About this RNA:
The record gives the reactivity of an RNA of 207 nucleotides to 2A3 and DMS. For DMS, 3,508 sequencing reads were counted. The RNA was probed in 150 mM KOAc, 10 mM MgCl2 and 150 mM bicine (pH 8.5) at 24 C.
[RMDB]
RNA sequence: GGGAACGACUCGAGUAGAGUCGAAAACCGUAGGAGCGUAACAAGGCUUGGAUUUAUACUCAGAAGUAUAUUCGAAAGAGUAUACCACGAGUAUUGUCAGCCUUGAAGAAGCUCCUAAACGGAAAACCCAUGUCAUUGUUCGCAAUGACAUGGGUAACAUUUCAUCUAGCUUCGGCUAGAUGAAAUGAAAAGAAACAACAACAACAAC
Reactivity to 2A3 in 0.01 (KOAc 150mM, MgCl2 10mM, bicine 150mM(pH8.5), 24C), signal-to-noise 3, nucleotides 027 to 156: c000c000g000u010a010g000g010a010g010c010g020u070a020a030c000a010a000g010g000c010u110u190g100g000a020u220u300u070a000u040a000c000u000c000a020g010a070a000g010u000a010u000a000u010u000c000g050a040a060a060g000a040g000u000a000u000a000c020c000a020c030g010a000g000u000a000u000u010g010u000c000a000g010c000c010u000u010g000a020a000g000a000a000g000c010u020c010c000u000a010a010a000c010g030g030a080a100a060a040c010c000c000a000u010g000u000c000a000u000u000g020u080u090c250g000c150a000a020u000g010a000c000a000u010g000g000g000u010a000a000
Reactivity to DMS in 0.01 (KOAc 150mM, MgCl2 10mM, bicine 150mM(pH8.5), 24C), signal-to-noise 2, nucleotides 027 to 156: c000c000g020u000a070g030g020a020g000c000g010u010a120a300c010a020a020g020g010c010u010u020g010g010a020u010u000u000a000u000a020c020u000c000a050g030a260a150g010u000a000u000a000u000u000c000g020a240a150a300g000a050g020u000a000u000a030c000c020a300c250g020a020g010u000a010u000u000g010u000c000a100g010c000c000u010u040g020a000a080g020a210a300g010c010u000c010c000u000a000a020a090c000g000g000a050a110a080a050c000c000c000a040u000g010u000c000a040u000u010g010u020u000c300g050c000a020a020u000g010a040c000a000u010g010g000g040u000a010a040
For 2A3 the reverse transcriptase was SuperScript II with manganese.
The 2A3 profile rests on 3,222 reads.